[RMDB]
RNA sequence: GGGAACGACUCGAGUAGAGUCGAAAACGGCCUCACCGCCCUCGACGCGAGGACGGUCCGCCGUAGGGCAAACCUUCCGCGCCACACCGCCCGAACCCGACAGCUAACCCGGUAGGCGGAGCACUGGGGACUUUGGUGACUUCGGUCACCAAAGUCCAAAAGAAACAACAACAACAAC
Reactivity to 2A3 in 0.01 (KOAc 150mM, MgCl2 10mM, bicine 150mM(pH8.5), 24C), signal-to-noise 1, nucleotides 027 to 126: c000g030g020c000c040u130c030a050c000c000g000c000c030c000u020c010g300a300c070g080c120g140a000g010g000a000c000g000g030u000c000c000g000c000c000g000u030a030g000g010g000c070a060a000a060c000c000u000u060c030c000g070c000g030c000c000a070c020a010c000c050g040c000c010c010g010a030a020c000c010c010g000a030c010a020g110c000u080a100a090c010c030c000g100g000u020a030g070g000c020g040g000a010g040c010a040c060u040g000g080